[RMDB]
RNA sequence: GGGAACGACUCGAGUAGAGUCGAAAAGUUAGCCACAGUGCUGUCACCAUAUAAUCAUAUUGGUGCAGACUAUUCCAUCACACAUUCUGCUUGUGAAUCCAUUAGGGGGAUGUUGAGGAUCAAGCAGUGAUGGUACAGUCUUCGGACUGUACCAUCAAAAAGAAACAACAACAACAAC
Reactivity to DMS in 0.01 (KOAc 150mM, MgCl2 10mM, bicine 150mM(pH8.5), 24C), signal-to-noise 2, nucleotides 027 to 126: g030u000u000a050g040c120c080a070c140a080g010u010g010c000u000g000u020c020a010c040c000a020u000a040u000a150a110u030c240a140u000a050u010u000g020g010u000g000c050a020g010a040c050u000a120u010u000c020c000a100u010c100a100c170a110c210a080u000u000c020u000g000c020u000u000g000u000g000a300a120u000c000c010a030u000u010a120g050g010g000g000g000a070u000g010u000u000g000a000g000g010a130u000c010a000a010g040c000a020g010
Reactivity to 2A3 in 0.01 (KOAc 150mM, MgCl2 10mM, bicine 150mM(pH8.5), 24C), signal-to-noise 2, nucleotides 027 to 126: g050u060u060a020g000c030c030a140c060a080g120u130g260c020u020g170u280c020a000c000c030a020u020a010u010a110a280u240c210a070u030a050u190u150g010g000u000g000c020a010g000a020c010u040a100u040u050c050c020a070u040c040a040c000a020c000a140u150u010c010u020g000c020u020u000g010u020g000a010a030u000c020c000a020u090u110a230g000g000g000g010g010a000u000g010u040u120g000a010g000g010a000u000c000a000a040g000c010a010g010
This 177-nucleotide RNA was probed chemically with DMS and 2A3. In probing experiments dimethyl sulfate is read out at A N1 and C N3, which are open when not base-paired.